[RMDB]
Structure probing data (2A3 and DMS) for a 177-nucleotide construct. The RNA was probed in 150 mM KOAc, 10 mM MgCl2 and 150 mM bicine (pH 8.5) at 24 C.
RNA sequence: GGGAACGACUCGAGUAGAGUCGAAAACACCGUGAUCCAGUAGGUUGGCAUUCUGUUCGGGUGGAAGCUCGGGUGAGAACUCGAGUGGACCGAGUGGAAAAGAAAAUCCUGGCCAUAGUAGCAGCGUCAUAUAAAAGGCGUUCGCGCCUUUUAUAUGAAAAGAAACAACAACAACAAC
Reactivity to 2A3 in 0.01 (KOAc 150mM, MgCl2 10mM, bicine 150mM(pH8.5), 24C), signal-to-noise 8, nucleotides 027 to 126: c070a010c000c020g040u040g030a070u050c020c000a020g050u080a080g090g050u030u020g040g010c040a040u020u000c000u010g040u010u010c020g020g010g030u300g110g030a010a000g010c000u000c000g000g010g000u010g040a090g010a020a010c000u000c000g000a010g010u030g010g000a010c000c000g000a000g000u040g020g030a000a030a020a020g080a010a070a010a010u020c010c000u010g040g000c020c010a060u070a090g110u080a010g040c080a010g020c030g060u010
Reactivity to DMS in 0.01 (KOAc 150mM, MgCl2 10mM, bicine 150mM(pH8.5), 24C), signal-to-noise 3, nucleotides 027 to 126: c070a120c070c020g010u010g010a070u010c030c010a030g000u000a050g000g020u000u000g000g040c230a130u010u000c010u000g010u000u000c010g010g000g020u010g000g010a120a200g010c010u000c010g020g000g010u010g020a200g020a230a020c000u000c000g000a020g000u000g000g000a010c020c020g000a000g020u000g000g000a020a030a050a080g020a090a050a060a070u010c020c000u000g000g020c180c020a040u010a070g020u020a030g010c090a060g000c110g010u010
For DMS the reverse transcriptase was MarathonRT.